This 177-nucleotide RNA was probed chemically with 2A3 and DMS. The RNA was probed in 150 mM KOAc, 10 mM MgCl2 and 150 mM bicine (pH 8.5) at 24 C. Values are in units of 0.01, from 0 to 300, in steps of 10. In probing experiments dimethyl sulfate is read out at A N1 and C N3, which are open when not base-paired. For 2A3 the reverse transcriptase was SuperScript II with manganese. The DMS profile rests on 1,301 reads. The data come from the RNA Mapping Database (RMDB), library M2PK50.

[RMDB]
RNA sequence: GGGAACGACUCGAGUAGAGUCGAAAAGGUAGCCACUUCGGUGGCUACCAAAGAGAUAGUACCUAUUGAGUUCCUGUGUAGGUACUCAAGACAGGAUGUCAAAAACAUGAUUCUUCGGAAUCAUGAAUCUAUCUGCUCAGUUCGCUGAGCAGAUAGAAAAAGAAACAACAACAACAAC
Reactivity to 2A3 in 0.01 (KOAc 150mM, MgCl2 10mM, bicine 150mM(pH8.5), 24C), signal-to-noise 1, nucleotides 027 to 126: g010g010u010a000g010c000c000a000c010u010u050c150g070g010u000g000g000c000u000a000c000c000a000a000a000g040a000g020a010u060a040g060u060a080c000c000u010a040u020u020g030a030g020u000u040c000c020u090g080u080g100u270a000g000g000u000a010c000u010c000a000a120g030a050c050a050g090g090a160u210g020u010c020a030a050a000a000a030c000a000u000g010a010u010u000c010u060u050c230g070g020a010a000u020c010a000u000g010a010a030
Reactivity to DMS in 0.01 (KOAc 150mM, MgCl2 10mM, bicine 150mM(pH8.5), 24C), signal-to-noise 2, nucleotides 027 to 126: g000g010u000a010g010c000c000a000c000u020u000c190g050g020u000g010g000c000u000a000c000c000a000a070a060g000a170g000a110u010a050g000u000a050c000c000u000a170u000u000g000a030g000u000u000c000c000u000g000u000g010u000a020g000g000u000a020c000u000c060a020a030g000a100c240a110g030g040a160u000g020u020c030a070a070a070a110a210c020a000u000g000a020u000u000c010u000u010c170g040g000a020a010u000c010a000u000g000a100a090